[RMDB]
RNA sequence: GGGAACGACUCGAGUAGAGUCGAAAAAUCAACUAGCCCCGAAAAUGGAUGGCGCUGAAGCGCGCGACCCACACCCGGCCAUCUGGGCGAACGCCAUGCCCCGAUGAGUAGGAGGGCGCGGCGGCCGGUCAUGUGUAUCGUUCGCGAUACACAUGACAAAAGAAACAACAACAACAAC
Reactivity to 2A3 in 0.01 (KOAc 150mM, MgCl2 10mM, bicine 150mM(pH8.5), 24C), signal-to-noise 6, nucleotides 027 to 126: a000u050c020a010a060c040u080a040g040c010c020c000c010g120a110a070a040a070u130g050g050a020u070g030g000c040g000c100u110g080a160a060g030c070g000c000g000c000g120a300c000c010c000a030c010a060c030c010c000g090g030c020c000a020u010c010u020g000g020g000c010g020a080a040c070g070c050c010a050u150g010c000c000c010c010g050a080u120g040a030g060u080a030g000g050a050g030g000g000c010g000c000g080g040c000g040g000c000c010g030
Reactivity to DMS in 0.01 (KOAc 150mM, MgCl2 10mM, bicine 150mM(pH8.5), 24C), signal-to-noise 3, nucleotides 027 to 126: a060u050c120a070a100c120u020a140g020c010c000c020c030g050a090a010a080a100u040g010g000a060u030g000g000c060g010c060u000g000a100a070g000c050g010c010g000c000g000a140c030c000c040a060c130a100c110c020c050g010g000c040c020a030u010c020u000g000g000g010c030g010a090a110c150g010c060c080a070u040g010c020c000c000c040g000a120u020g020a130g040u040a070g000g010a200g010g000g000c000g000c040g000g000c000g020g010c000c020g020